This 177-nucleotide RNA was probed chemically with DMS. Source: RMDB library OK2TST, as collected in RNAgym. The RNA was probed in 150 mM KOAc, 10 mM MgCl2 and 150 mM bicine (pH 8.5) at 24 C.

RNA sequence: GGGAACGACUCGAGUAGAGUCGAAAAUACGCUGAUGGUACAGACGAGGCGCUUACUGCUAUGAAGUAUGCGAUUUACAUGGCAAAGUCUUAUCAGUUAGAACUUUAUGGCGUGCAUGUGAUUAAUACACCAUCUAGGCGUUCGCGCCUAGAUGGUGAAAAGAAACAACAACAACAAC
Reactivity to DMS in 0.01 (KOAc 150mM, MgCl2 10mM, bicine 150mM(pH8.5), 24C), signal-to-noise 2, nucleotides 027 to 126: u020a040c070g000c030u000g030a040u020g000g010u010a050c140a100g010a120c070g000a140g010g000c070g010c070u000u010a030c120u000g000c140u000a070u010g000a070a070g010u000a080u020g030c050g010a080u000u000u000a080c030a030u000g000g020c110a040a080a100g030u000c010u000u010a060u000c030a080g010u020u000a050g030a050a070c050u010u000u000a040u020g010g000c060g010u000g010c090a040u000g010u000g020a080u010u010a040a100u010a170